[RMDB]
RNA sequence: GGGAACGACUCGAGUAGAGUCGAAAACCUUCUGCGGUGAUCCUCCCUCUCCUUGUCGGUGAACCCGCUCUUGUGAGGCCUCUUCAUAGGUCCGGAGUCGACCUCCAUCUGAUCUGUUCGGGCCCUCUAACCUUAGUGUUCGCACUAAGGAAAAGAAACAACAACAACAAC
Reactivity to 2A3 in 0.01 (KOAc 150mM, MgCl2 10mM, bicine 150mM(pH8.5), 24C), signal-to-noise 9, nucleotides 027 to 129: c010c000u090u070c070u110g080c050g030g020u060g030a100u040c000c000u020c010c000c000u030c010u010c000c020u050u120g070u090c040g020g020u080g060a080a080c010c000c010g040c020u030c020u060u140g060u060g030a070g010g020c000c010u070c030u170u050c050a110u090a140g000g020u000c020c020g020g010a020g020u060c040g060a090c010c010u020c010c000a060u030c050u070g040a060u010c000u020g070u060u040c030g010g010g000c000c020c000u010c010u030a040a060
Reactivity to DMS in 0.01 (KOAc 150mM, MgCl2 10mM, bicine 150mM(pH8.5), 24C), signal-to-noise 9, nucleotides 027 to 129: c020c020u010u020c040u030g030c070g000g020u040g000a060u000c050c040u000c020c010c000u010c020u030c020c020u030u030g020u020c060g020g010u040g030a120a160c070c000c010g030c070u020c010u010u010g030u030g010a130g010g020c050c030u010c100u060u040c080a040u000a060g000g000u030c030c070g000g040a050g000u000c030g010a080c090c030u020c010c050a100u030c080u020g020a050u030c040u030g020u030u040c130g030g010g010c030c010c020u010c030u020a070a150

The record gives the reactivity of an RNA of 170 nucleotides to 2A3 and DMS. 2A3 is a SHAPE reagent: it acylates the 2'-hydroxyl of flexible nucleotides of all four kinds. For DMS, 140,244 sequencing reads were counted.